[RMDB]
RNA sequence: GGGAACGACUCGAGUAGAGUCGAAAAGGAGAUCGAAGACGACCGACGUCAGCACGGUCAGGAUGUAGGUCCGCAUGCAUCCGAGUUGACGAAACUUCACGAUUUCCAAAGCGGACAAGAAGUCAAACAGUACGAGCGAUUUCGAUCGCUCGUACUGAAAAGAAACAACAACAACAAC
Reactivity to DMS in 0.01 (KOAc 150mM, MgCl2 10mM, bicine 150mM(pH8.5), 24C), signal-to-noise 1, nucleotides 027 to 126: g000g030a030g010a020u000c000g050a040a070g050a000c120g040a010c020c020g020a270c110g000u020c100a070g020c110a300c000g010g040u000c030a060g000g000a020u050g030u000a000g000g000u000c060c000g000c140a070u000g010c000a000u000c000c000g000a160g000u000u000g000a080c000g000a140a100a000c040u060u000c000a130c030g000a030u010u010u000c000c000a070a220a110g040c000g020g000a050c070a270a060g000a080a100g000u050c130a010a080a300
Reactivity to 2A3 in 0.01 (KOAc 150mM, MgCl2 10mM, bicine 150mM(pH8.5), 24C), signal-to-noise 2, nucleotides 027 to 126: g030g000a020g000a020u020c000g010a080a000g050a030c050g010a020c010c000g070a140c080g230u150c070a040g040c190a030c060g030g010u020c010a000g000g000a000u000g000u010a000g000g020u000c000c010g000c000a020u010g000c020a000u010c000c000g040a030g000u000u020g050a060c130g020a110a060a010c000u030u020c020a060c040g070a010u000u020u030c000c000a070a010a000g000c020g000g000a000c000a000a060g130a030a010g100u070c100a010a070a100

The record gives the reactivity of an RNA of 177 nucleotides to DMS and 2A3. 2A3 adducts were read by reverse transcription with SuperScript II with manganese. The DMS profile rests on 1,178 reads. DMS adducts were read by reverse transcription with MarathonRT.